Annotation: An RNA of 177 nucleotides, treated with DMS and 2A3 and read out base by base. The DMS profile rests on 1,330 reads. For DMS the reverse transcriptase was MarathonRT. DMS (dimethyl sulfate) methylates the pairing face of unpaired adenines and cytosines.

RNA sequence: GGGAACGACUCGAGUAGAGUCGAAAAACAAUUAUCAAUGGGAUUAUAUGGAUAUUUUCUCCAUUUCUGACAUAACUUGGCAAUUUGAAUAUCGAAAUUGUCACGAUAUCGAUAUCAGACAAAGUAAUCAUCCAUGCUACUUCGGUAGCAUGGAUGAAAAAGAAACAACAACAACAAC
Reactivity to DMS in 0.01 (KOAc 150mM, MgCl2 10mM, bicine 150mM(pH8.5), 24C), signal-to-noise 1, nucleotides 027 to 126: a020c030a040a040u030u050a110u030c030a110a000u000g020g000g010a100u000u000a000u000a030u090g000g000a080u010a030u000u000u020u040c040u050c000c060a020u000u000u000c020u000g010a140c090a070u000a030a020c050u010u000g020g040c040a000a000u070u000u000g050a130a030u110a080u000c050g000a000a040a010u000u000g030u000c040a000c100g050a110u000a000u010c120g010a020u020a080u020c110a000g000a050c300a030a010a120g050u000a000a110
Reactivity to 2A3 in 0.01 (KOAc 150mM, MgCl2 10mM, bicine 150mM(pH8.5), 24C), signal-to-noise 3, nucleotides 027 to 126: a010c090a050a090u220u120a060u170c070a070a060u100g050g050g050a000u050u090a040u020a030u150g120g050a090u040a080u080u060u000u010c040u000c010c000a010u000u060u100c010u050g000a000c000a020u100a010a080c020u000u000g010g020c000a020a020u000u000u060g260a270a140u190a150u300c110g040a020a020a050u020u000g000u000c000a010c030g030a030u040a030u070c100g030a050u000a020u120c000a000g040a010c090a010a010a000g080u030a000a100